An RNA of 177 nucleotides, treated with DMS and 2A3 and read out base by base. The data come from the RNA Mapping Database (RMDB), library M2PK90. Values cover nucleotides 27 to 126. Conditions: 150 mM KOAc, 10 mM MgCl2 and 150 mM bicine (pH 8.5), 24 C. DMS adducts were read by reverse transcription with MarathonRT. 2A3 adducts were read by reverse transcription with SuperScript II with manganese.
RNA sequence: GGGAACGACUCGAGUAGAGUCGAAAAUAAGAGCAUGUACGAAUCACGAUAUGAGAGUUCCUGGUGAAUCCCGGGUACAAGGAAAGGUAUUAAUCUCCCACUGCGUUCCCUUGCAGUACGGAUAUAAACUCUCGUUACGUUUCGACGUAACGAGAGUAAAAGAAACAACAACAACAAC
Reactivity to DMS in 0.01 (KOAc 150mM, MgCl2 10mM, bicine 150mM(pH8.5), 24C), signal-to-noise 2, nucleotides 027 to 126: u030a100a140g000a080g000c060a060u010g000u020a050c040g020a070a080u000c060a030c070g030a130u010a120u000g020a110g010a140g020u000u000c020c040u000g010g010u000g000a150a130u000c100c020c000g000g000g000u000a040c050a030a060g000g000a070a030a030g010g020u020a040u000u000a030a060u020c070u010c000c020c040a060c050u010g000c020g010u000u000c000c000c000u000u000g010c000a010g010u000a040c180g000g010a070u010a080u000a060a030
Reactivity to 2A3 in 0.01 (KOAc 150mM, MgCl2 10mM, bicine 150mM(pH8.5), 24C), signal-to-noise 1, nucleotides 027 to 126: u150a020a060g010a000g000c060a010u090g040u110a020c030g180a140a120u080c050a040c150g070a040u050a100u300g070a000g030a030g030u000u010c010c010u020g040g080u040g050a100a030u070c000c030c050g000g010g040u070a010c040a030a000g040g060a070a100a010g000g000u030a060u020u130a130a090u000c080u050c080c030c000a030c030u040g000c000g050u040u050c010c010c000u000u040g000c000a030g010u070a030c020g000g000a040u010a000u020a060a080